[RMDB]
RNA sequence: GGGAACGACUCGAGUAGAGUCGAAAAAUGAUCGGAAUAUUGGUGUGCUCUAUAUUCCCAAGGGACUGGAAAAAAGUCUGAAAACUGGUGAUAGAACGGUACGACUUGGCUACUUUGCCGAUCACAGGCUAAAUCUUAACUUCGGUUAAGAUUUAGCAAAAGAAACAACAACAACAAC
Reactivity to DMS in 0.01 (KOAc 150mM, MgCl2 10mM, bicine 150mM(pH8.5), 24C), signal-to-noise 5, nucleotides 027 to 126: a110u010g010a020u000c010g000g000a090a080u000a060u000u000g020g020u010g010u000g010c010u000c030u010a160u010a100u010u000c130c010c010a090a120g010g000g010a030c020u010g000g030a000a050a100a100a060a010g010u010c010u010g000a050a040a110a160c120u000g010g010u000g000a090u010a060g000a080a090c250g000g000u000a050c070g010a060c060u000u000g010g010c090u000a050c100u000u000u010g000c030c000g010a030u000c020a060c250a110g000
Reactivity to 2A3 in 0.01 (KOAc 150mM, MgCl2 10mM, bicine 150mM(pH8.5), 24C), signal-to-noise 3, nucleotides 027 to 126: a000u060g000a010u020c020g000g030a100a020u110a120u170u100g070g010u090g040u060g050c010u010c010u010a060u010a020u110u050c000c000c000a010a030g050g010g000a010c050u080g120g000a090a090a020a050a060a000g020u030c030u060g080a110a060a030a050c050u050g040g010u070g050a050u020a110g100a080a010c020g010g010u020a020c020g020a020c150u070u080g060g010c010u020a040c060u130u120u150g060c010c000g000a000u020c020a030c030a060g110